The data come from the RNA Mapping Database (RMDB), library OK3TST. Structure probing data (2A3) for a 207-nucleotide construct. For 2A3, 517 sequencing reads were counted. For 2A3 the reverse transcriptase was SuperScript II with manganese. The RNA was probed in 150 mM KOAc, 10 mM MgCl2 and 150 mM bicine (pH 8.5) at 24 C.
[RMDB]
RNA sequence: GGGAACGACUCGAGUAGAGUCGAAAACACUCUUAUUGGAAAGAAAUGUAUGUAUAGAAACAACUACAAUUCAGUAUCAUACGUAUAAUGAAGAUAAUAGUAAACUGAUUACCAAAUUUAUUACAAAAAAAGACCUUGCUACAAUUGUGUGUGCAUACUACUCAGGUACUUUCGAGUACCUGAGUAGAAAAGAAACAACAACAACAAC
Reactivity to 2A3 in 0.01 (KOAc 150mM, MgCl2 10mM, bicine 150mM(pH8.5), 24C), signal-to-noise 1, nucleotides 027 to 156: c000a010c000u070c000u010u020a020u040u120g030g030a110a160a040g000a070a150a100u050g030u000a000u000g030u000a030u010a110g100a150a070a060c110a060a100c080u230a030c160a060a060u080u040c000a030g060u030a030u080c020a000u050a030c000g050u040a020u000a140a040u080g000a070a110g030a000u090a110a080u020a040g140u070a150a040a000c050u060g000a100u070u100a050c020c000a020a120a120u140u280u080a070u020u140a140c100a050a300a000a060a000a000a000g050a050c010c120u110u180g000c130u050a110c040a050a180u210u020g010u020g000u030g010u020g010c020a050u070a000